[RMDB]
RNA sequence: GGGAACGACUCGAGUAGAGUCGAAAACAUAGCGUUUCACAAUGUGCGCCAUUAACAUUGUUUAUGCAAGCACGUUUCGCAAUGUACGGCGCAGAAACAUCGCCAACACAAAUACGCUUCACGAUGUAAAACAUCGGUGCGUUCGCGCACCGAUGAACCUUCCUGAAAUGUUCGCAUUUCAGGAAGGAAAAGAAACAACAACAACAAC
Reactivity to 2A3 in 0.01 (KOAc 150mM, MgCl2 10mM, bicine 150mM(pH8.5), 24C), signal-to-noise 7, nucleotides 027 to 156: c040a050u120a010g040c020g020u020u130u150c190a110c070a110a140u140g030u040g060c000g000c020c010a050u120u160a080a010c010a020u030u040g070u040u120u120a090u120g050c090a070a090g090c060a040c190g010u030u080u100c060g000c010a010a010u010g000u020a010c050g000g000c000g000c010a000g010a010a060a000c010a020u040c020g060c070c030a120a040c040a020c000a090a150a030u150a040c030g020c040u080u100c110a040c050g020a020u040g050u180a030a060a080a070c000a000u000c000g000g000u000g000c000g010u030u030c110g010c000g000c040a000c000c010g000a000u000g000a000a000
Reactivity to DMS in 0.01 (KOAc 150mM, MgCl2 10mM, bicine 150mM(pH8.5), 24C), signal-to-noise 2, nucleotides 027 to 156: c050a120u000a060g050c030g030u000u010u000c030a120c100a110a110u000g010u020g010c010g000c010c010a130u000u000a140a110c020a060u000u000g030u000u000u000a070u010g000c040a120a070g070c090a100c070g020u000u000u000c130g010c060a050a030u000g030u000a110c080g010g000c030g020c040a040g000a100a080a170c020a060u000c030g010c060c020a060a070c070a140c060a080a140a150u000a060c090g000c030u010u010c080a080c040g010a040u000g000u010a110a090a080a170c020a000u000c000g050g050u020g030c000g040u020u010c300g060c070g000c000a000c000c000g020a000u000g010a010a070
Structure probing data (2A3 and DMS) for a 207-nucleotide construct.
For 2A3, 5,851 sequencing reads were counted.
For DMS, 2,705 sequencing reads were counted.
Reactivities are given for positions 27 through 156.
The reactions ran in a buffer of 150 mM KOAc, 10 mM MgCl2 and 150 mM bicine (pH 8.5), at 24 C.
Source: RMDB library M2RFPK, as collected in RNAgym.